Annotation: Conditions: 150 mM KOAc, 10 mM MgCl2 and 150 mM bicine (pH 8.5), 24 C. This 177-nucleotide RNA was probed chemically with DMS and 2A3.
[RMDB]
RNA sequence: GGGAACGACUCGAGUAGAGUCGAAAAGUUAUGGAAAACGUCUUAGCUACCACUACAACAACAAUGCUGGACGGUGAUGGUUCGACUUACUCGAAACCAUCACGUAGUGGUAGUCGUACCCAUUCAAUGUUUAGUGUUCUUUCGAGAACACUAAACAAAAAGAAACAACAACAACAAC
Reactivity to DMS in 0.01 (KOAc 150mM, MgCl2 10mM, bicine 150mM(pH8.5), 24C), signal-to-noise 5, nucleotides 027 to 126: g020u000u010a100u010g010g010a110a080a050a070c050g010u020c060u010u010a180g010c000u010a010c010c000a000c010u000a010c010a090a100c110a060a080c190a090a140u010g010c110u000g010g000a080c140g030g020u000g010a020u000g000g000u000u000c000g000a030c260u030u000a100c240u000c010g000a010a020a030c010c000a000u000c000a000c020g000u000a000g010u010g010g000u000a010g010u000c030g000u000a080c030c010c000a120u020u010c110a050a160
Reactivity to 2A3 in 0.01 (KOAc 150mM, MgCl2 10mM, bicine 150mM(pH8.5), 24C), signal-to-noise 4, nucleotides 027 to 126: g030u050u050a080u230g130g040a090a080a020a040c010g050u020c070u090u070a040g000c000u000a000c000c010a000c000u020a010c000a120a000c010a050a010c030a100a290u200g050c060u130g130g070a060c090g040g000u000g000a000u010g020g000u020u020c020g000a040c050u110u200a070c050u120c010g000a050a030a040c010c000a010u010c000a000c010g000u010a000g010u000g000g000u000a000g000u010c000g010u030a040c010c010c000a010u110u100c080a100a110